[RMDB]
RNA sequence: GGGAACGACUCGAGUAGAGUCGAAAAGUUGAACGUGAGCGUCGUGAAUUUGUUGCCAAUGUAUCACAUGAGUUACGUACACCUUUAACUUCUAUGAAUAGUUACAUUGAAGCACUUGAAGAAGGUGCAACAACGUAUAAUUCGUUAUACGUUGUUGAAAAGAAACAACAACAACAAC
Reactivity to 2A3 in 0.01 (KOAc 150mM, MgCl2 10mM, bicine 150mM(pH8.5), 24C), signal-to-noise 9, nucleotides 027 to 126: g100u090u090g030a040a010c030g030u040g040a040g060c030g030u030c010g010u060g060a100a120u090u050u100g070u050u050g050c030c010a050a030u070g020u040a080u100c040a030c030a160u120g040a020g080u030u050a030c050g020u050a050c030a060c040c000u030u060u020a040a050c000u030u020c040u070a030u020g030a090a060u140a170g120u110u060a050c010a020u000u030g010a030a010g020c060a040c100u080u090g020a060a030g040a030a010g040g000u010g000
Reactivity to DMS in 0.01 (KOAc 150mM, MgCl2 10mM, bicine 150mM(pH8.5), 24C), signal-to-noise 9, nucleotides 027 to 126: g020u020u010g010a060a050c060g010u000g000a130g010c020g010u000c030g020u010g010a060a090u020u010u010g000u010u010g010c080c040a030a080u010g010u010a050u010c040a090c080a060u010g010a060g010u010u010a030c230g010u020a120c100a050c080c040u010u010u010a040a090c020u010u010c050u010a040u010g000a090a120u020a080g000u010u020a060c050a040u000u000g000a060a090g000c060a020c040u000u010g000a100a090g010a080a010g000g000u000g010